[RMDB]
RNA sequence: GGGAACGACUCGAGUAGAGUCGAAAAUGGCGGUCUUUGGCAUAUUGGUCCCUUAUCCGGCCAGAAGGGUGCCAGGCUUUGUCGCAUUUGGCAUGGGGGUGUCCCAUAGCGGGUGGGUGCAUUUUGGCGAUAUAUUAUAUUUCGAUAUAAUAUAUCGAAAAGAAACAACAACAACAAC
Reactivity to 2A3 in 0.01 (KOAc 150mM, MgCl2 10mM, bicine 150mM(pH8.5), 24C), signal-to-noise 8, nucleotides 027 to 126: u080g030g010c020g030g060u060c050u120u070u070g040g000c020a040u040a110u150u100g040g010u150c020c000c000u000u030a070u010c020c030g070g000c010c010a020g070a080a040g100g030g020u080g010c000c010a020g010g010c000u110u080u140g030u070c030g000c050a070u050u040u130g050g010c070a050u030g010g000g010g010g040u060g050u060c020c000c010a040u050a020g040c040g020g030g050u120g030g020g000u070g020c030a050u030u050u030u180g090g040
Reactivity to DMS in 0.01 (KOAc 150mM, MgCl2 10mM, bicine 150mM(pH8.5), 24C), signal-to-noise 7, nucleotides 027 to 126: u010g000g010c030g010g000u010c040u010u020u010g020g020c020a080u020a120u030u010g010g010u020c020c020c030u010u040a090u030c140c190g000g000c020c020a060g010a070a090g010g010g010u010g010c010c010a040g000g000c040u010u020u040g030u010c070g010c050a070u020u020u020g000g010c050a050u010g000g010g000g000g010u010g000u020c010c010c010a060u020a060g020c090g000g010g010u030g000g010g010u020g010c080a090u010u010u020u010g010g010